Structure probing data (2A3 and DMS) for a 177-nucleotide construct. The reactions ran in a buffer of 150 mM KOAc, 10 mM MgCl2 and 150 mM bicine (pH 8.5), at 24 C. For DMS the reverse transcriptase was MarathonRT.
[RMDB]
RNA sequence: GGGAACGACUCGAGUAGAGUCGAAAAUAUUCCUAUGCACAUCAUUUGGUCGAAGUAGCUGUGCGUUUUGCAGCUCCAAGCGCUAUCAAGAAACGGCGUGGUAUUCAACUACGUGCGUCAAUGCGCACGUCCCCAGUCGGUUCGCCGACUGGGGACGAAAAGAAACAACAACAACAAC
Reactivity to 2A3 in 0.01 (KOAc 150mM, MgCl2 10mM, bicine 150mM(pH8.5), 24C), signal-to-noise 7, nucleotides 027 to 126: u170a030u010u030c000c000u010a060u070g080c050a040c010a110u120c020a060u060u080u210g100g030u090c080g080a100a060g040u130a010g000c010u010g040u050g060c040g120u010u030u100u190g020c020a010g000c000u050c080c020a120a090g000c010g000c010u090a060u200c090a150a030g060a120a070a010c000g020g000c000g000u000g010g020u070a200u170u220c090a040a040c000u010a000c000g040u080g220c000g010u030c040a010a050u140g000c000g000c000a010
Reactivity to DMS in 0.01 (KOAc 150mM, MgCl2 10mM, bicine 150mM(pH8.5), 24C), signal-to-noise 4, nucleotides 027 to 126: u040a210u030u000c000c010u010a070u020g030c070a060c070a030u000c040a080u000u000u010g020g010u030c080g010a110a090g010u000a030g000c020u000g000u000g000c230g010u000u010u030u030g020c060a050g000c030u010c080c100a070a120g000c020g020c030u000a110u010c130a110a130g010a100a100a020c010g020g000c020g000u000g000g010u030a070u010u020c210a110a040c030u000a010c020g000u000g000c000g010u000c070a070a070u010g030c010g010c010a260